Structure probing data (2A3 and DMS) for a 177-nucleotide construct.
For DMS, 121,977 sequencing reads were counted.

[RMDB]
RNA sequence: GGGAACGACUCGAGUAGAGUCGAAAAGAAAGUCGGCGUCGUAUGAGGCCGGAAAUGCGACAUGGCUGCGAAGCAGUCGCCGACGAAUGUCCAUGAUGCUGUUACCGGCCUUUAAGCAUCGGACUAAGGGCCGGUCGGUGUUCGCAUUGAUUGGCCCAAAAGAAACAACAACAACAAC
Reactivity to 2A3 in 0.01 (KOAc 150mM, MgCl2 10mM, bicine 150mM(pH8.5), 24C), signal-to-noise 9, nucleotides 027 to 126: g090a030a050a000g010u010c000g000g010c040g010u010c010g000u020a020u070g070a080g000g020c000c010g000g010a030a020a000u040g000c000g000a010c040a100u190g010g000c000u010g000c080g140a150a050g010c010a000g010u020c020g000c000c000g000a000c010g020a050a050u110g000u000c010c010a060u260g000a000u020g000c020u030g040u220u060a060c000c000g010g000c000c000u030u080u050a050a000g000c000a010u020c020g010g000a010c010u030a070a140
Reactivity to DMS in 0.01 (KOAc 150mM, MgCl2 10mM, bicine 150mM(pH8.5), 24C), signal-to-noise 9, nucleotides 027 to 126: g000a120a090a110g010u000c000g000g000c020g010u000c000g010u000a030u010g010a130g000g000c010c000g000g000a050a150a040u010g010c000g010a020c020a130u020g010g000c000u000g010c020g020a140a140g010c000a020g010u000c010g010c000c010g000a010c000g020a150a070u030g000u000c000c010a120u050g010a010u000g010c000u010g000u020u020a060c000c000g000g000c000c010u000u010u010a040a040g010c020a050u000c030g000g000a050c040u020a070a100
Source: RMDB library OK1LIB, as collected in RNAgym. DMS adducts were read by reverse transcription with MarathonRT.